[RMDB]
An RNA of 177 nucleotides, treated with DMS and 2A3 and read out base by base. Conditions: 150 mM KOAc, 10 mM MgCl2 and 150 mM bicine (pH 8.5), 24 C.
RNA sequence: GGGAACGACUCGAGUAGAGUCGAAAAGUCGCCGCCUCUACAUCAACGCCCAGCGCGGGCGAGGGAGGCUUCCUACGGGGGUGACCCAUUCGCCGGCAUGGUAGAGGACUGCAAGAUUGCCGCGACGACCACUGACUAUCUUCGGAUAGUCAGUGGUAAAAGAAACAACAACAACAAC
Reactivity to DMS in 0.01 (KOAc 150mM, MgCl2 10mM, bicine 150mM(pH8.5), 24C), signal-to-noise 2, nucleotides 027 to 126: g000u020c010g010c030c160g020c010c030u020c000u010a060c060a110u000c110a150a150c130g010c010c000c030a170g010c060g020c050g010g020g020c020g000a040g000g010g000a070g000g020c000u000u010c000c000u000a140c230g000g010g000g010g000u000g030a300c010c000c010a120u030u000c000g000c020c000g020g020c020a280u020g000g010u000a020g000a030g000g040a110c150u000g010c020a050a130g000a140u000u020g020c020c060g000c010g000a030c030g010
Reactivity to 2A3 in 0.01 (KOAc 150mM, MgCl2 10mM, bicine 150mM(pH8.5), 24C), signal-to-noise 2, nucleotides 027 to 126: g020u030c010g010c060c030g030c000c040u030c010u040a040c020a130u170c110a140a030c110g040c030c010c000a040g040c300g080c070g180g000g040c000g000a010g030g000g040a050g020g000c010u020u180c000c000u040a150c200g030g000g010g000g000u030g080a050c000c010c010a090u080u080c010g020c000c000g090g000c000a050u100g010g000u010a000g010a000g000g110a300c050u020g000c000a010a090g050a300u070u240g000c010c030g000c000g010a000c000g070